[RMDB]
RNA sequence: GGGAACGACUCGAGUAGAGUCGAAAAUGCAGAUGGGGCAAUGGCGGUAGGAGUACAUUGCGCGACUGAUUUCUUGGGAAUGGUUCAUGCUGGAGUAAUCGACGUUUCAGCUGAAAUCAUCCAUCGUGGCCGUACUACCCACGUGGUCGCCGUUGAACGUCCCUAUAGCAUUCGUGCUAUAGGGACGAAAAGAAACAACAACAACAAC
Reactivity to DMS in 0.01 (KOAc 150mM, MgCl2 10mM, bicine 150mM(pH8.5), 24C), signal-to-noise 1, nucleotides 027 to 156: u000g010c050a080g020a090u000g000g000g000g000c040a040a060u020g000g020c030g000g010u010a070g000g000a110g030u000a090c100a080u000u020g010c040g040c010g010a030c020u040g000a120u010u000u010c030u010u000g040g010g000a030a040u000g030g010u000u000c050a100u000g020c080u000g000g010a080g080u030a140a190u010c080g010a090c180g020u000u000u000c060a060g000c050u020g020a090a030a050u000c020a070u000c050c010a060u000c020g040u000g020g000c010c000g060u000a040c070u000a120c100c000c000a060c060g010u000g010g000u000c000g010c000c000g030u000u000g000a070a290
Reactivity to 2A3 in 0.01 (KOAc 150mM, MgCl2 10mM, bicine 150mM(pH8.5), 24C), signal-to-noise 3, nucleotides 027 to 156: u150g010c010a010g030a040u080g010g010g010g000c030a020a070u030g010g000c020g030g000u030a020g040g000a010g000u050a040c030a060u080u200g050c080g000c010g030a020c010u060g040a200u100u190u040c090u080u100g060g000g040a130a130u050g030g000u050u060c010a010u180g000c000u000g020g010a000g000u080a050a170u170c090g110a040c100g030u010u040u080c020a000g020c010u010g030a020a040a000u040c010a000u000c010c010a000u030c010g010u020g030g020c030c030g010u050a050c050u040a030c000c000c000a020c040g040u070g000g010u020c020g000c030c010g030u010u020g010a060a020
Chemical mapping of a 207-nucleotide RNA with DMS and 2A3.
The DMS profile rests on 2,519 reads.
2A3 adducts were read by reverse transcription with SuperScript II with manganese.
The RNA was probed in 150 mM KOAc, 10 mM MgCl2 and 150 mM bicine (pH 8.5) at 24 C.
Source: RMDB library OK3TST, as collected in RNAgym.